[RMDB]
RNA sequence: GGGAACGACUCGAGUAGAGUCGAAAAGAUAUGGAGCUACCGUUGUCAGUCUAUCUCGGAAACGAGUAAGGACUUGGAUUUACGGAAGCUCCUAAGUCAAACCUAGUGCGGUUCGCCGCACUAGGAAGAGCUUGUAUUAGUUCGCUAAUACAAGCUCAAAAGAAACAACAACAACAAC
Reactivity to 2A3 in 0.01 (KOAc 150mM, MgCl2 10mM, bicine 150mM(pH8.5), 24C), signal-to-noise 3, nucleotides 027 to 126: g020a010u050a060u170g000g010a000g010c000u040a080c010c000g010u010u040g040u050c000a020g010u000c010u030a180u060c010u010c000g070g040a120a070a050c020g010a010g000u090a280a300g050g000a000c000u050u170g120g020a050u210u210u260a010c010g000g000a020a010g020c000u000c000c000u000a060a000g010u010c020a040a020a140c010c000u010a000g000u010g000c000g020g100u050u110c300g040c090c000g000c010a000c000u000a000g000g000a020a030
Reactivity to DMS in 0.01 (KOAc 150mM, MgCl2 10mM, bicine 150mM(pH8.5), 24C), signal-to-noise 5, nucleotides 027 to 126: g010a030u020a300u000g010g010a000g010c000u000a040c000c000g040u000u000g010u000c030a020g000u000c010u000a300u020c000u000c000g000g000a140a070a200c010g010a020g000u010a090a180g000g000a010c010u010u010g040g010a020u000u010u000a020c000g000g010a170a030g000c000u000c000c000u000a000a070g000u000c020a120a100a260c000c000u010a000g010u000g010c010g010g010u000u010c290g030c010c000g000c000a010c000u000a000g010g020a050a040
The data come from the RNA Mapping Database (RMDB), library TTRDEL. The record gives the reactivity of an RNA of 177 nucleotides to 2A3 and DMS. The DMS profile rests on 3,985 reads. 2A3 adducts were read by reverse transcription with SuperScript II with manganese. DMS (dimethyl sulfate) methylates the pairing face of unpaired adenines and cytosines. For DMS the reverse transcriptase was MarathonRT. The 2A3 profile rests on 4,718 reads. Conditions: 150 mM KOAc, 10 mM MgCl2 and 150 mM bicine (pH 8.5), 24 C.